[RMDB]
The record gives the reactivity of an RNA of 207 nucleotides to 2A3 and DMS. For DMS, 6,702 sequencing reads were counted. For 2A3, 5,703 sequencing reads were counted.

RNA sequence: GGGAACGACUCGAGUAGAGUCGAAAACCGUAGGACUGCGAUGCUUGCGAAGAACUGUCAAUAAUGAAGUAUUCGAAAGAGUACUUCUAUGACAGGGAGCAAGGGCAGCAGUCCUAAACGGAAAAUCGCAAGAACACGUUCGCGUGUUCUUGCGAAAUCUUACUCAAAUGUUCGCAUUUGAGUAAGAAAAAGAAACAACAACAACAAC
Reactivity to 2A3 in 0.01 (KOAc 150mM, MgCl2 10mM, bicine 150mM(pH8.5), 24C), signal-to-noise 4, nucleotides 027 to 156: c000c000g000u020a010g010g000a010c000u000g020c000g130a250u100g170c040u030u000g000c020g110a270a020g010a100a050c000u000g000u000c000a070a190u210a180a170u290g000a000a000g000u000a000u010u010c020g040a080a060a040g000a010g000u000a000c000u020u000c000u020a020u010g000a000c000a010g000g000g010a010g000c000a010a000g010g080g030c050a010g010c010a000g010u000c000c000u000a000a000a000c010g020g050a050a090a000a250u050c020g000c020a000a010g010a000a000c000a000c000g040u110u110c300g020c010g080u000g000u000u000c000u010u000g000c000g000a000a010a010
Reactivity to DMS in 0.01 (KOAc 150mM, MgCl2 10mM, bicine 150mM(pH8.5), 24C), signal-to-noise 3, nucleotides 027 to 156: c020c010g020u000a030g030g020a010c000u000g020c000g020a200u020g010c000u000u000g010c020g040a150a180g030a120a170c010u000g010u030c010a060a260u010a120a110u010g010a040a030g020u000a020u000u000c000g010a160a130a300g020a030g020u000a000c000u000u000c000u000a040u020g000a030c010a030g000g000g020a300g010c010a010a050g000g020g000c100a300g020c020a020g000u000c000c000u000a000a030a070c040g000g000a110a040a140a120u000c000g000c030a030a020g010a030a010c000a000c000g010u000u020c300g020c040g030u000g000u000u000c000u000u000g010c000g000a000a020a050